This 177-nucleotide RNA was probed chemically with 2A3 and DMS. For DMS, 903 sequencing reads were counted. 2A3 adducts were read by reverse transcription with SuperScript II with manganese. The data come from the RNA Mapping Database (RMDB), library M2PK90. Values cover nucleotides 27 to 126.
[RMDB]
RNA sequence: GGGAACGACUCGAGUAGAGUCGAAAAGGAAAUAUGCUUAAGCCUCAAUAAAGCUUGCCUUGAGUGCGUCAAGCAGAAAAUAUAGACUGAAACAUUUAGUAUGGGCAAGCAGGGAGCAAUAAAAAAAGUAAUAGCCAACUUUCGAGUUGGCUAUUACAAAAGAAACAACAACAACAAC
Reactivity to 2A3 in 0.01 (KOAc 150mM, MgCl2 10mM, bicine 150mM(pH8.5), 24C), signal-to-noise 1, nucleotides 027 to 126: g050g060a060a020a070u180a040u070g040c020u070u040a150a030g010c010c000u020c040a050a090u020a130a100a020g010c030u000u020g010c000c000u030u090g040a020g000u100g020c000g020u020c040a050a050g000c030a000g120a030a090a000a000u270a010u030a060g080a040c020u050g010a010a100a000c020a000u060u080u080a040g010u060a140u140g020g000g010c000a020a010g050c040a000g030g030g020a080g010c100a060a060u100a130a150a000a020a000a000a000
Reactivity to DMS in 0.01 (KOAc 150mM, MgCl2 10mM, bicine 150mM(pH8.5), 24C), signal-to-noise 2, nucleotides 027 to 126: g010g000a060a160a080u000a040u000g030c000u020u010a090a100g010c020c010u040c030a040a100u000a120a060a120g050c020u010u000g010c020c010u000u000g010a080g000u040g000c190g000u000c280a050a040g000c060a090g020a100a060a060a060u000a190u050a160g020a090c030u000g020a170a080a040c060a000u000u010u010a010g000u030a070u000g000g000g000c010a010a010g050c030a130g000g000g030a030g000c080a060a020u000a000a010a030a090a050a060a100